[RMDB]
RNA sequence: GGGAACGACUCGAGUAGAGUCGAAAACAGGGCCUUUGCUACCAGUGGAAGGGAUUGAGGAAAGCUUCCUCUGUGAUAAGUCUUGGCUUGGCAAAACAUAGCCUAGCCUUCUUCCUUCCCUCUCCAGACCAGGGCACCACGUGGAGAUAGCGCCGUAUAAUGGUAAAUCCUUCGGGAUUUACCAUUAAAAAGAAACAACAACAACAAC
Reactivity to 2A3 in 0.01 (KOAc 150mM, MgCl2 10mM, bicine 150mM(pH8.5), 24C), signal-to-noise 2, nucleotides 027 to 156: c050a020g000g000g000c010c000u110u110u080g050c020u060a140c040c050a060g030u030g070g020a020a000g000g010g010a020u060u080g020a040g000g020a000a040a080g000c030u050u030c000c020u130c040u060g070u010g040a120u090a190a020g010u040c050u110u090g000g000c000u010u030g000g000c010a000a100a150a070c060a060u200a070g000c000c020u000a000g010c010c000u010u030c010u010u040c000c000u010u040c000c000c000u010c010u000c010c020a060g030a110c020c030a030g000g000g040c010a050c020c020a040c040g090u100g010g040a080g020a020u100a040g040c040g040c060c040g070u100a040
Reactivity to DMS in 0.01 (KOAc 150mM, MgCl2 10mM, bicine 150mM(pH8.5), 24C), signal-to-noise 1, nucleotides 027 to 156: c080a090g000g010g020c000c010u010u010u000g040c100u000a080c080c030a060g000u000g040g020a050a030g010g000g010a070u000u000g040a040g000g000a000a080a070g000c080u000u010c040c010u000c010u010g020u000g010a160u000a070a290g000u000c060u000u000g020g020c110u000u020g010g060c020a070a070a100a190c040a050u020a120g000c140c000u000a030g000c010c000u000u000c010u000u010c030c010u000u020c000c030c010u020c060u000c000c000a080g000a120c040c030a110g010g020g030c000a090c040c070a040c090g000u000g030g000a160g020a070u000a080g030c070g010c040c030g000u000a120